[RMDB]
The record gives the reactivity of an RNA of 207 nucleotides to 2A3. The reactions ran in a buffer of 150 mM KOAc, 10 mM MgCl2 and 150 mM bicine (pH 8.5), at 24 C.
RNA sequence: GGGAACGACUCGAGUAGAGUCGAAAACAAGUUAUAGAAUAUCAGCAGGGGUCCCUGCUUCCGAAGAACUGAGCAGCUCGGCGUCACUCUUUUGCCUUGUACUUCUAUGUCCGCACCACAUAUCAUUCCUACCCUUUUGUCACCAAGGCUGUGACCACCACGUUUUACGUUUCGACGUAAAACGUGGAAAAGAAACAACAACAACAAC
Reactivity to 2A3 in 0.01 (KOAc 150mM, MgCl2 10mM, bicine 150mM(pH8.5), 24C), signal-to-noise 1, nucleotides 027 to 156: c020a000a060g080u110u080a110u080a090g170a270a030u160a080u130c030a000g020c010a020g000g000g000g100u100c100c000c010u000g010c000u050u060c040c000g110a110a080g020a070a020c020u060g030a020g020c040a000g130c010u130c130g000g050c060g020u060c050a070c030u010c050u000u010u090u130g030c000c000u020u010g010u020a050c080u070u040c000u060a070u030g060u010c020c050g040c020a000c020c000a000c020a040u130a050u050c070a070u030u040c020c000u010a070c080c000c000u030u060u130u010g020u050c020a020c000c010a110a050g000g000c090u070g050u050g020a000c000c080a000